RNA sequence: GGGAACGACUCGAGUAGAGUCGAAAAUGAUAGGGCGUGCCCGCCCUGGCCGUGGCGGCAAGGUUGAGGCCGAUCUCGCCAUAGCCGUGCGCGCAAGGCACAAGUGCUGUCAGCAGAUCGAGAAAAAGAUGCGAUAUCCUUUCGAGGAUAUCGCAUCAAAAGAAACAACAACAACAAC
Reactivity to DMS in 0.01 (KOAc 150mM, MgCl2 10mM, bicine 150mM(pH8.5), 24C), signal-to-noise 2, nucleotides 027 to 126: u020g030a020u000a000g000g040g050c080g030u000g000c020c020c050g000c020c010c010u010g000g010c020c000g040u010g000g020c040g040g000c100a100a240g040g000u000u000g040a160g000g000c060c080g050a150u000c080u000c020g000c020c010a090u000a110g000c020c020g000u000g000c120g010c050g020c100a050a090g020g000c030a070c020a070a220g040u000g030c020u000g010u010c030a050g020c100a060g000a140u000c050g010a120g010a040a070a060a060a170
Reactivity to 2A3 in 0.01 (KOAc 150mM, MgCl2 10mM, bicine 150mM(pH8.5), 24C), signal-to-noise 1, nucleotides 027 to 126: u050g010a010u050a020g000g040g000c030g030u010g010c000c000c000g020c000c000c000u000g010g000c000c000g040u000g010g000c000g000g010c040a040a180g090g010u100u090g090a130g200g000c060c020g020a080u020c020u040c030g000c000c000a020u000a010g000c000c020g030u030g040c100g000c030g000c080a110a120g010g020c000a000c000a050a090g090u080g090c010u010g000u020c020a010g000c000a020g050a170u180c030g120a030g180a170a070a010a040a030
The record gives the reactivity of an RNA of 177 nucleotides to DMS and 2A3.
It was measured as part of the RMDB library OK2TST.
The DMS profile rests on 1,084 reads.
DMS adducts were read by reverse transcription with MarathonRT.
For 2A3, 1,395 sequencing reads were counted.